An RNA of 177 nucleotides, treated with 2A3 and DMS and read out base by base. It was measured as part of the RMDB library OK2TST. For DMS, 5,415 sequencing reads were counted. For DMS the reverse transcriptase was MarathonRT. For 2A3, 4,412 sequencing reads were counted.
RNA sequence: GGGAACGACUCGAGUAGAGUCGAAAAUCUUUAUGGAGUUUACACGUGCUAACGCUGCGCGAGUUGCGAGUGACAUUAUUCAAAGUACACAUACUGAUUUCCUAAUACGAGGAGCCGUGGGAUCCGGCAGCGAGAUAUAUUUCGAUAUAUCUCGCUGAAAAGAAACAACAACAACAAC
Reactivity to 2A3 in 0.01 (KOAc 150mM, MgCl2 10mM, bicine 150mM(pH8.5), 24C), signal-to-noise 4, nucleotides 027 to 126: u020c010u020u060u020a080u110g080g010a180g080u100u130u110a030c060a010c060g030u020g030c030u050a190a030c050g000c100u110g040c020g000c030g050a090g030u090u100g050c020g000a040g010u050g050a050c040a110u090u150a100u120u170c050a050a080a060g060u040a030c030a000c000a030u030a030c020u020g020a060u000u040u000c010c000u020a140a090u100a150c070g040a070g150g030a020g010c010c020g030u050g020g030g030a010u020c030c000g010g000
Reactivity to DMS in 0.01 (KOAc 150mM, MgCl2 10mM, bicine 150mM(pH8.5), 24C), signal-to-noise 5, nucleotides 027 to 126: u000c010u000u000u010a040u000g000g000a150g010u000u000u000a070c060a100c120g000u000g020c040u000a140a110c080g020c080u010g010c040g030c110g010a140g010u000u000g020c050g000a070g020u000g000a060c060a060u000u000a070u010u000c180a080a070a120g000u010a030c080a050c040a030u000a030c040u000g000a060u000u000u000c010c000u000a060a100u010a080c110g010a120g010g010a120g020c030c030g030u000g010g010g020a120u000c070c010g000g010